About this RNA:
The record gives the reactivity of an RNA of 177 nucleotides to DMS and 2A3. The RNA was probed in 150 mM KOAc, 10 mM MgCl2 and 150 mM bicine (pH 8.5) at 24 C. For 2A3 the reverse transcriptase was SuperScript II with manganese.
RNA sequence: GGGAACGACUCGAGUAGAGUCGAAAAGUUUCUUGAGCUUCCCUGGGAUGAGCGUUUGGGAGAGCUGAUUCUGCAGCCCAGAGAGUAGUCUCAGGGCAUCCUCUGGAGCCUGACCUGUGAUCGUCGCUCGUUGUACUCAUUUCGAUGAGUACAACGAAAAAGAAACAACAACAACAAC
Reactivity to DMS in 0.01 (KOAc 150mM, MgCl2 10mM, bicine 150mM(pH8.5), 24C), signal-to-noise 4, nucleotides 027 to 126: g020u010u000u000c010u000u010g020a080g000c190u000u000c010c010c000u000g000g000g010a020u010g000a120g010c300g000u010u000u010g010g000g010a110g000a120g020c030u000g000a180u030u030c150u020g020c050a110g000c010c000c000a030g000a020g000a060g020u000a210g010u000c010u010c020a030g000g000g020c160a020u010c100c020u000c020u000g000g000a080g000c030c030u000g000a050c040c020u010g010u020g000a100u000c040g010u020c060g010c070
Reactivity to 2A3 in 0.01 (KOAc 150mM, MgCl2 10mM, bicine 150mM(pH8.5), 24C), signal-to-noise 7, nucleotides 027 to 126: g030u060u060u030c010u030u080g030a010g010c020u040u020c000c000c000u010g010g000g000a070u080g010a040g140c090g060u030u050u050g030g020g000a180g030a030g070c020u040g070a300u190u080c050u170g030c020a030g010c000c000c010a010g010a010g000a010g020u090a030g020u000c000u010c030a010g000g000g000c010a020u030c010c000u000c010u030g020g020a020g020c010c020u030g050a080c010c000u050g040u050g040a090u070c060g020u030c040g020c040
Source: RMDB libraries RFM100 and RFMREP, as collected in RNAgym. DMS adducts were read by reverse transcription with MarathonRT.